Source: RMDB library OK1LIB, as collected in RNAgym. Structure probing data (2A3) for a 177-nucleotide construct. As a SHAPE reagent, 2A3 marks flexible, mostly unpaired nucleotides at the ribose 2'-OH.

RNA sequence: GGGAACGACUCGAGUAGAGUCGAAAAGAGCUUCACCUGCUCAAGGCGAUCGAAAAGGCUACGCGGCAAACGCUUACCGAGGCGCAAUUGCCCACCGUCGAGGAUGUCAACACCCAGCGGGUGGCCACCUCCUCGGACGCUUCGGCGUCCGAGGAGGAAAAGAAACAACAACAACAAC
Reactivity to 2A3 in 0.01 (KOAc 150mM, MgCl2 10mM, bicine 150mM(pH8.5), 24C), signal-to-noise 1, nucleotides 027 to 126: g000a000g010c040u100u060c040a030c030c030u000g000c010u080c130a000a100g120g070c000g060a060u050c050g000a140a000a000a110g000g000c060u150a030c110g000c000g000g080c000a000a090a070c130g000c010u010u170a250c000c080g030a130g020g020c030g000c000a050a130u000u070g000c000c070c000a000c010c010g090u060c000g040a110g200g000a080u060g090u180c090a090a010c030a210c020c000c000a000g090c050g000g000g050u000g000g000c000c020a000

The RNA was probed in 150 mM KOAc, 10 mM MgCl2 and 150 mM bicine (pH 8.5) at 24 C.